Source information: Conditions: 150 mM KOAc, 10 mM MgCl2 and 150 mM bicine (pH 8.5), 24 C. Structure probing data (DMS and 2A3) for a 177-nucleotide construct. DMS adducts were read by reverse transcription with MarathonRT. Values cover nucleotides 27 to 126.
[RMDB]
RNA sequence: GGGAACGACUCGAGUAGAGUCGAAAAGAUAUGGAAACCGAUGAAAGUGGACCCAACAGCUCGGAAACGAGACAUGGGUGCACUGGAGGUUUCCUAAGUCAAACUACGCUCCUUCGGGAGCGUAGAACCUAGUCUGAAUGUUCGCAUUCAGACUAGGAAAAGAAACAACAACAACAAC
Reactivity to DMS in 0.01 (KOAc 150mM, MgCl2 10mM, bicine 150mM(pH8.5), 24C), signal-to-noise 4, nucleotides 027 to 126: g000a050u000a300u000g000g000a010a020a020c010c010g020a110u010g010a130a120a030g020u000g000g000a020c000c000c000a030a090c240a170g000c000u000c000g000g000a090a070a180c010g010a000g000a030c080a170u000g000g010g020u000g010c000a010c000u000g000g010a060g020g010u000u000u000c000c010u000a010a020g000u000c030a100a070a220c020u000a010c000g010c000u010c000c000u000u020c180g020g010g000a010g010c000g010u000a000g010a040a150
Reactivity to 2A3 in 0.01 (KOAc 150mM, MgCl2 10mM, bicine 150mM(pH8.5), 24C), signal-to-noise 2, nucleotides 027 to 126: g010a010u060a020u110g010g010a020a010a000c030c030g300a300u060g010a030a000a000g000u000g020g150a010c010c000c000a060a070c090a090g040c000u000c000g040g000a130a060a030c010g000a000g030a020c050a080u050g030g000g030u080g060c000a000c000u010g000g020a010g000g010u000u000u000c000c010u000a080a010g020u010c040a040a040a130c000u000a000c000g000c010u010c010c010u020u100c300g100g000g010a030g000c000g010u010a000g000a000a000